[RMDB]
RNA sequence: GGGAACGACUCGAGUAGAGUCGAAAAGUCAAGGUAGCACUGAGAGGAAGUCGGUGCAGAGGUAGGAUUCCGACUCAGGUCUGGGGUCUCAUGCUGAUGUUCUUGCCAUUAGUCAGACUCCGCUGGGCUCACGCAAACAAUUCGUUGUUUGCGUGAGAAAAGAAACAACAACAACAAC
Reactivity to DMS in 0.01 (KOAc 150mM, MgCl2 10mM, bicine 150mM(pH8.5), 24C), signal-to-noise 3, nucleotides 027 to 126: g000u000c050a060a070g010g010u010a090g000c030a020c030u000g000a050g020a200g000g020a090a110g010u000c040g020g010u010g010c030a050g000a090g000g000u010a080g000g000a110u000u010c040c030g000a190c020u000c030a050g010g000u010c030u010g040g050g010g000u000c000u000c200a070u010g020c000u000g000a030u010g010u000u010c110u010u000g000c280c020a010u000u010a030g010u010c300a050g000a040c020u000c010c000g000c010u000g000g000g000
Reactivity to 2A3 in 0.01 (KOAc 150mM, MgCl2 10mM, bicine 150mM(pH8.5), 24C), signal-to-noise 3, nucleotides 027 to 126: g050u050c030a030a020g070g020u040a020g050c010a010c060u070g010a040g010a030g210g100a110a040g060u030c020g020g000u060g030c050a000g010a020g100g070u100a040g060g060a130u130u040c040c020g040a010c020u000c000a020g050g060u040c070u180g010g000g000g010u000c010u010c020a100u300g000c010u000g010a010u020g050u130u120c090u110u140g060c040c000a010u010u010a000g000u030c060a000g000a020c000u030c010c020g000c000u000g030g000g000